[RMDB]
RNA sequence: GGGAACGACUCGAGUAGAGUCGAAAAGAUAUGGAGAAUUAAACAGGGAGCCUAUCGGAAACGAUGAGGCGAGGAUCUGUGAUUCUCCUAAGUCAAAGAUGCAGUAUCGUUCGCGAUACUGCAUCAACCAUUAGAGUGGCUUCGGCCACUCUAAUGGAAAAGAAACAACAACAACAAC
Reactivity to DMS in 0.01 (KOAc 150mM, MgCl2 10mM, bicine 150mM(pH8.5), 24C), signal-to-noise 2, nucleotides 027 to 126: g000a020u010a300u000g000g000a010g010a020a010u000u000a140a150a120c000a000g020g010g010a070g030c000c010u010a060u000c000g010g000a090a100a220c000g000a000u010g000a000g020g030c000g010a090g010g000a050u000c010u020g000u000g000a030u000u000c000u000c000c000u010a010a090g000u000c060a090a120a130g000a020u000g000c000a000g000u000a010u000c000g000u000u000c290g000c020g020a000u000a000c000u000g000c010a000u000c000a050a160
Reactivity to 2A3 in 0.01 (KOAc 150mM, MgCl2 10mM, bicine 150mM(pH8.5), 24C), signal-to-noise 2, nucleotides 027 to 126: g040a010u100a030u210g030g010a010g020a020a020u080u130a300a300a020c010a000g040g030g000a000g000c000c000u010a010u020c000g000g070a080a040a020c030g030a020u260g300a040g040g000c000g020a060g020g020a020u060c000u000g010u010g010a000u010u020c000u070c000c010u000a170a020g080u030c050a070a060a100g020a000u000g000c000a000g010u000a000u010c000g020u020u160c300g000c010g110a000u000a000c000u000g000c010a000u000c000a000a000
This 177-nucleotide RNA was probed chemically with DMS and 2A3. For DMS, 1,526 sequencing reads were counted. It was measured as part of the RMDB library TTRDEL. The 2A3 profile rests on 2,099 reads. For DMS the reverse transcriptase was MarathonRT. For 2A3 the reverse transcriptase was SuperScript II with manganese.